[RMDB]
RNA sequence: GGGAACGACUCGAGUAGAGUCGAAAAAUACCUAUGAACUUAGUCAGGUUUUUUUAUAAUAUAGCGAUGUAGGUUAGGUAACACUAAUCUCAUGACAUUUCUCCUUUCAACCGAAACUGUUUUAAACUGAUGAGACUAAGUUCGCUUAGUCUCAUCAAAAAGAAACAACAACAACAAC
Reactivity to 2A3 in 0.01 (KOAc 150mM, MgCl2 10mM, bicine 150mM(pH8.5), 24C), signal-to-noise 3, nucleotides 027 to 126: a000u120a050c030c000u060a100u150g080a070a090c040u080u080a060g050u110c040a010g000g020u020u000u020u000u010u020u160a210u060a120a120u190a040u090a060g130c020g030a020u020g100u120a020g010g000u020u010a010g000g020u020a060a000c030a000c030u030a010a020u000c000u030c010a020u040g060a070c020a030u090u110u030c050u040c040c000u050u140u150c120a110a070c060c010g090a080a040a060c050u020g040u000u000u050u050a110a100a040c050
Reactivity to DMS in 0.01 (KOAc 150mM, MgCl2 10mM, bicine 150mM(pH8.5), 24C), signal-to-noise 1, nucleotides 027 to 126: a030u060a060c040c040u000a020u000g020a020a090c140u040u060a040g020u020c030a140g000g000u000u000u000u050u000u000u000a060u020a030a050u010a030u020a150g040c020g000a040u000g000u000a090g000g030u000u000a000g000g050u000a030a160c190a230c040u010a000a010u010c020u010c070a000u000g000a030c030a060u000u010u000c000u010c010c090u010u000u020c100a030a110c100c040g000a050a040a040c190u000g000u000u000u000u000a030a040a110c170